[RMDB]
RNA sequence: GGGAACGACUCGAGUAGAGUCGAAAACUUAUUAGUAACUAAUCCAAAGCAAGUAUAGGAGAACAGGUUUUUAACUAUUUUUAGGCAGAUAAAAAAUAGUAUUCGACAGUCUAACACUAACUGAACACCACGCUCUCUUACUUCGGUAAGAGAGCAACAGUAUUGGCUACUUCGGUAGCCAAUACUGAAAAGAAACAACAACAACAAC
Reactivity to 2A3 in 0.01 (KOAc 150mM, MgCl2 10mM, bicine 150mM(pH8.5), 24C), signal-to-noise 1, nucleotides 027 to 156: c010u070u090a040u200u030a270g060u030a020a070c090u050a090a060u000c020c030a140a040a010g000c050a040a020g040u070a100u130a160g040g000a050g020a010a050c060a070g010g020u010u000u020u020u080a040a000c000u020a010u000u040u020u040u040a010g010g070c050a020g020a040u080a000a070a000a000a000a020u010a020g010u040a060u110u050c010g030a000c000a030g060u070c100u100a100a030c100a070c080u020a100a000c020u110g070a100a020c020a060c070c020a050c150g000c000u040c000u000c000u000u000a000c000u030u030c070g000g000u000a000a000g000a000g000a000g000c000a000a010